The record gives the reactivity of an RNA of 177 nucleotides to 2A3 and DMS. The RNA was probed in 150 mM KOAc, 10 mM MgCl2 and 150 mM bicine (pH 8.5) at 24 C. Values cover nucleotides 27 to 126. The 2A3 profile rests on 9,477 reads.
RNA sequence: GGGAACGACUCGAGUAGAGUCGAAAAGAGAAAGAAAGAAAGGUGAUGGCUCUAUACUACUAUGAAGAGCUUGUUCUUAAGGAAAUUGGAAAGAUUCUAGGAGUUAGCGAAUCACGAGUAUCCCAGAAAAUACGCAAGUAUUCGUACUUGCGUAUUUAAAAGAAACAACAACAACAAC
Reactivity to 2A3 in 0.01 (KOAc 150mM, MgCl2 10mM, bicine 150mM(pH8.5), 24C), signal-to-noise 6, nucleotides 027 to 126: g070a010g040a020a120a000g090a050a110a020g100a060a110a010g100g030u050g040a060u070g070g000c010u020c010u030a040u030a050c030u010a030c010u030a050u290g030a020a030g020a010g060c000u010u010g020u030u010c010u050u040a080a040g060g020a080a120a090u090u040g050g070a180a070a010g040a050u020u020c000u020a020g010g010a020g010u040u040a000g000c010g020a050a020u020c010a010c030g010a010g020u030a020u030c030c000c010a010g100a000
Reactivity to DMS in 0.01 (KOAc 150mM, MgCl2 10mM, bicine 150mM(pH8.5), 24C), signal-to-noise 9, nucleotides 027 to 126: g010a300g000a090a080a090g000a100a080a100g010a090a090a100g010g010u000g010a080u000g010g010c050u000c040u000a060u010a060c060u000a050c070u010a060u010g010a040a030g000a180g000c020u000u000g010u000u000c010u000u000a090a100g010g000a020a030a080u000u000g010g010a060a060a070g000a070u000u000c020u000a040g010g010a030g010u000u000a030g000c040g000a240a110u000c020a040c070g000a070g000u000a070u000c000c000c010a190g000a090